[RMDB]
RNA sequence: GGGAACGACUCGAGUAGAGUCGAAAAAAUCGCCGCCCGCUUCAUCUCAGGUCUAGUCUGGGAUGGCGGGCUAGGCUCUCUCACCGUAGCAACAGACAACGGCUUAGUGCUAACCGCCCGUGUUCGCCUCGACGGCGCGCCGAAAACAACCCUGCUCCACCAAUUCUUGUUUCGACAAGAAUUGGUGAAAAGAAACAACAACAACAAC
Reactivity to 2A3 in 0.01 (KOAc 150mM, MgCl2 10mM, bicine 150mM(pH8.5), 24C), signal-to-noise 2, nucleotides 027 to 156: a000a000u140c070g020c040c020g020c000c020c000g000c040u130u150c000a010u010c010u010c010a020g010g100u120c140u220a070g130u080c000u050g000g010g000a000u000g020g000c040g000g000g010c010u010a000g000g010c050u010c000u000c000u000c010a060c050c040g080u100a030g050c000a030a120c060a070g170a050c030a120a000c100g010g000c010u080u100a050g010u060g090c050u070a000a070c040c040g050c040c000c020g060u090g050u040u040c070g000c020c040u020c060g120a100c070g040g000c010g000c010g040c020c020g040a060a070a000a020c020a010a050c030c010c000u030g020c020u010c040
An RNA of 207 nucleotides, treated with 2A3 and read out base by base.
The 2A3 profile rests on 1,219 reads.
The RNA was probed in 150 mM KOAc, 10 mM MgCl2 and 150 mM bicine (pH 8.5) at 24 C.